This 177-nucleotide RNA was probed chemically with 2A3 and DMS. The RNA was probed in 150 mM KOAc, 10 mM MgCl2 and 150 mM bicine (pH 8.5) at 24 C. The data come from the RNA Mapping Database (RMDB), library OK2TST. High 2A3 reactivity points to a flexible backbone, as in loops and unpaired stretches. For 2A3, 2,930 sequencing reads were counted.
[RMDB]
RNA sequence: GGGAACGACUCGAGUAGAGUCGAAAAUACUGGCCGCACUGUCUCAUGAUUUGCGUACUCCCUUGACAGUGCUAUUUGGUCAGGCGGAAAUCCUGACACUGGAUCUGGCCGCUGAAGGCUCACGCCAUCACUUACGGAGUUUCGACUCCGUAAGUGAAAAAGAAACAACAACAACAAC
Reactivity to 2A3 in 0.01 (KOAc 150mM, MgCl2 10mM, bicine 150mM(pH8.5), 24C), signal-to-noise 2, nucleotides 027 to 126: u110a020c040u010g040g000c020c030g010c010a000c000u000g020u000c000u030c090a150u150g080a150u100u040u190g090c050g030u050a130c080u050c010c010c000u010u040g000a000c010a000g010u010g000c010u030a080u070u100u070g000g000u010c000a000g010g010c030g030g050a030a070a030u010c010c000u010g030a010c040a070c140u040g040g000a020u000c010u060g060g000c050c020g000c070u090g090a120a030g030g020c040u030c060a020c030g010c000c000a020
Reactivity to DMS in 0.01 (KOAc 150mM, MgCl2 10mM, bicine 150mM(pH8.5), 24C), signal-to-noise 4, nucleotides 027 to 126: u010a100c110u000g010g010c080c120g030c010a010c020u000g010u000c010u010c160a120u020g000a070u000u000u000g010c250g030u000a100c150u000c010c010c010u020u000g010a030c010a010g010u000g010c020u010a020u000u000u010g020g010u000c020a020g000g030c050g000g010a100a070a100u000c000c000u000g010a050c100a090c270u000g000g000a050u010c090u010g000g000c010c030g020c150u000g000a090a120g010g010c030u010c120a110c180g010c010c040a160